An RNA of 207 nucleotides, treated with 2A3 and read out base by base. The reactions ran in a buffer of 150 mM KOAc, 10 mM MgCl2 and 150 mM bicine (pH 8.5), at 24 C. The data come from the RNA Mapping Database (RMDB), library RFM130.
[RMDB]
RNA sequence: GGGAACGACUCGAGUAGAGUCGAAAAUGAAUGAACAUCAUUGAGUGCAUCGUUGAUGUAAUUUUACUUAUUUUAUUCCAUUGUUGAAUUAAUUAAAGAAGUAUAUAUCAGCGUUGCAUUCAAUUAUGUUUUUCUCUAUCACUGGUUCGCCAGUGAAGAGCUUGCAUAGUUUCGACUAUGCAAGCUCAAAAGAAACAACAACAACAAC
Reactivity to 2A3 in 0.01 (KOAc 150mM, MgCl2 10mM, bicine 150mM(pH8.5), 24C), signal-to-noise 2, nucleotides 027 to 156: u140g070a050a060u070g010a000a010c000a000u000c000a000u000u000g000a000g000u010g000c000a000u000c010g000u000u010g000a010u010g000u060a000a140u030u060u010u000a060c000u010u060a010u060u060u010u000a010u020u010c020c010a200u120u300g040u140u040g010a000a010u020u100a020a020u060u110a170a050a000g030a030a000g000u010a020u000a000u000a000u180c000a000g000c000g000u000u010g010c010a000u000u000c000a000a000u000u000a000u000g000u000u000u000u010u010c000u000c000u000a110u040c000a000c000u010g000g030u050u050c220g070c020c000a040g090u180g010a010a000